An RNA of 207 nucleotides, treated with DMS and 2A3 and read out base by base. Conditions: 150 mM KOAc, 10 mM MgCl2 and 150 mM bicine (pH 8.5), 24 C.
RNA sequence: GGGAACGACUCGAGUAGAGUCGAAAACGGAUUAGGCGUGGAGGCGAAAGUCACCCUCCUCCCAUCGCAAGUUCGUGCUUGCGACUUACACGUAGGGCGAGGGGUGGGCGAAAGUUGCCAUGAGACCAAAAUAUGUAGUUCUUCGGAACUACAUAAAGCAAGAUCAUAGUUUCGACUAUGAUCUUGCAAAAGAAACAACAACAACAAC
Reactivity to DMS in 0.01 (KOAc 150mM, MgCl2 10mM, bicine 150mM(pH8.5), 24C), signal-to-noise 1, nucleotides 027 to 156: c050g000g000a100u000u000a080g000g020c070g070u010g030g030a110g020g000c050g030a050a150a160g000u000c040a090c020c000c010u000c010c000u000c000c000c020a190u000c030g040c000a010a020g050u010u010c240g010u000g000c030u000u000g040c010g000a000c100u000u000a120c180a060c060g030u020a070g020g020g000c200g000a020g010g000g000g010u010g000g000g050c030g010a050a140a290g010u000u000g010c000c060a040u000g010a170g000a160c090c000a120a110a060a260u000a010u000g000u010a030g010u000u010c000u000u010c300g070g000a000a010c010u000a010c000a010u010a000a090a150
Reactivity to 2A3 in 0.01 (KOAc 150mM, MgCl2 10mM, bicine 150mM(pH8.5), 24C), signal-to-noise 5, nucleotides 027 to 156: c030g000g000a130u160u110a090g050g010c070g020u050g000g000a010g030g000c040g060a130a060a020g060u060c030a070c000c000c000u020c000c020u030c000c000c010a020u040c000g000c010a010a000g000u200u280c170g180u300g080c000u010u000g000c000g000a010c000u030u100a070c080a040c120g130u110a090g020g010g010c080g030a070g020g040g070g130u120g010g020g000c040g030a060a060a020g030u020u020g010c030c020a040u070g030a030g020a080c030c060a020a030a010a120u090a010u010g000u020a000g000u000u000c010u000u010c140g070g000a010a010c000u000a010c000a000u010a000a010a010
Overview
2A3 is a SHAPE reagent: it acylates the 2'-hydroxyl of flexible nucleotides of all four kinds.